[RMDB]
RNA sequence: GGGAACGACUCGAGUAGAGUCGAAAAUCUUCGGAGAGCAAUCCUGCACGUGCGAUCUUCUCGGUGGUCUCUUCAUCGUCUAGCAGAUCUCCUUUAUGGUAGGUUACCAGAGCGUGCAGACGAUGAGGAAUCUCAAGAACCAGCCUCAACAGUUGCCAAACCUGUUACGUUUCGACGUAACAGGUUUAAAAGAAACAACAACAACAAC
Reactivity to DMS in 0.01 (KOAc 150mM, MgCl2 10mM, bicine 150mM(pH8.5), 24C), signal-to-noise 1, nucleotides 027 to 156: u000c080u000u000c030g020g020a160g000a100g020c030a100a140u030c060c040u000g030c080a040c090g020u010g020c020g000a050u020c040u000u010c020u000c000g050g030u020g000g000u000c100u000c020u000u000c020a060u030c020g070u000c010u000a090g050c030a100g020a060u020c010u000c020c020u000u000u000a060u000g000g030u000a040g020g030u000u000a060c000c030a090g000a080g050c080g030u010g050c020a060g010a060c000g010a050u010g000a010g000g000a050a070u000c050u000c020a060a120g020a030a090c060c020a190g050c040c020u020c040a110a070c100a150g020u000u000g020c020c080
Reactivity to 2A3 in 0.01 (KOAc 150mM, MgCl2 10mM, bicine 150mM(pH8.5), 24C), signal-to-noise 2, nucleotides 027 to 156: u110c020u130u110c050g040g000a040g010a000g030c050a010a110u060c000c030u040g010c020a020c090g040u070g020c040g040a030u040c010u040u010c060u050c020g020g000u010g060g000u030c060u000c000u070u010c000a000u000c000g010u000c000u040a020g040c000a020g050a170u090c030u100c040c080u090u190u170a120u150g060g000u020a070g110g140u150u040a050c000c010a000g000a000g020c120g040u060g000c000a000g000a010c000g000a000u000g000a000g000g000a000a010u050c090u000c040a020a020g030a050a030c010c010a000g060c000c000u050c030a050a070c090a130g070u170u080g040c010c040